RNA sequence: GGGAACGACUCGAGUAGAGUCGAAAAAGGUCAAAACCAGCCUGGGCAACAUGACGAAACCCUGUCUCCACAAAAAAAUUCAAAAAUUAGCCAGGCACGUUGGCACACACCAUGGCGGGAGGACUGCUUGAGCCCAAGGAGGUCAAGGCUGCAGUGAAACUUUAAGAUCGUUCGCGAUCUUAAAGUUAAAAGAAACAACAACAACAAC
Reactivity to DMS in 0.01 (KOAc 150mM, MgCl2 10mM, bicine 150mM(pH8.5), 24C), signal-to-noise 1, nucleotides 027 to 156: a030g040g050u000c040a020a070a080a100c010c020a230g020c040c010u040g000g000g000c030a050a080c090a030u000g010a140c060g020a140a070a120c020c050c040u000g020u000c020u000c080c000a130c130a000a000a050a050a120a040a120u020u050c080a010a040a120a100a120u010u000a100g020c060c010a120g020g020c040a070c050g010u000u010g030g000c030a160c060a120c050a100c030c010a130u000g010g000c050g000g010g040a050g060g020a160c000u000g010c020u000u000g000a140g020c000c010c000a110a070g020g000a230g020g020u000c020a030a160g010g060c060u000g020c000a160g020u000g000a210
Reactivity to 2A3 in 0.01 (KOAc 150mM, MgCl2 10mM, bicine 150mM(pH8.5), 24C), signal-to-noise 1, nucleotides 027 to 156: a000g040g020u040c020a000a000a000a120c000c000a010g020c000c000u010g020g000g000c060a190a040c020a080u100g020a020c040g080a070a060a020c030c020c020u000g080u030c000u000c030c020a030c090a020a000a010a000a070a020a090u150u140c050a060a030a050a050a030u140u040a080g020c030c010a030g010g000c030a030c050g050u080u040g060g000c040a000c000a000c000a010c100c010a100u080g010g000c000g000g000g000a020g000g010a050c010u090g000c020u080u040g000a000g030c010c000c000a010a090g030g010a010g020g030u020c010a000a040g000g010c000u020g020c060a020g020u070g130a080

The record gives the reactivity of an RNA of 207 nucleotides to DMS and 2A3. The data come from the RNA Mapping Database (RMDB), library OK3TST. For 2A3 the reverse transcriptase was SuperScript II with manganese. For DMS the reverse transcriptase was MarathonRT. The reactions ran in a buffer of 150 mM KOAc, 10 mM MgCl2 and 150 mM bicine (pH 8.5), at 24 C.